RNA sequence: GGGAACGACUCGAGUAGAGUCGAAAAUAAUGGUUAUGGUAAUUUAUUAACCAUAUGUAGGCAAUGUGAUGUAGAAAUGGGCACCAUGCAUAUGCACGAAUAUAUGGGUAUAGUGCACCUACGUGCUAUAAAUUUAUAACAAUUUUUUUCACCUCUAAACUCUGUCUUACUUCGGUAAGACAGAGUUAAAAGAAACAACAACAACAAC
Reactivity to 2A3 in 0.01 (KOAc 150mM, MgCl2 10mM, bicine 150mM(pH8.5), 24C), signal-to-noise 2, nucleotides 027 to 156: u040a000a020u010g030g010u030u010a010u010g000g100u040a090a040u030u070u230a180u050u060a020a000c000c000a000u020a010u010g020u030a040g010g000c040a040a010u040g050u080g110a060u030g050u130a100g080a120a220a080u090g070g010g040c060a100c040c000a000u080g010c020a010u100a140u050g050c020a040c290g090a170a000u070a010u000a020u090g050g000g000u050a090u040a100g060u020g000c050a060c070c050u110a050c070g000u000g000c000u010a040u150a110a070a000u140u210u130a130u050a040a040c040a020a080u000u010u000u000u000u130u150c100a140c050c050u080c000u050a040
Chemical mapping of a 207-nucleotide RNA with 2A3. 2A3 adducts were read by reverse transcription with SuperScript II with manganese. Conditions: 150 mM KOAc, 10 mM MgCl2 and 150 mM bicine (pH 8.5), 24 C.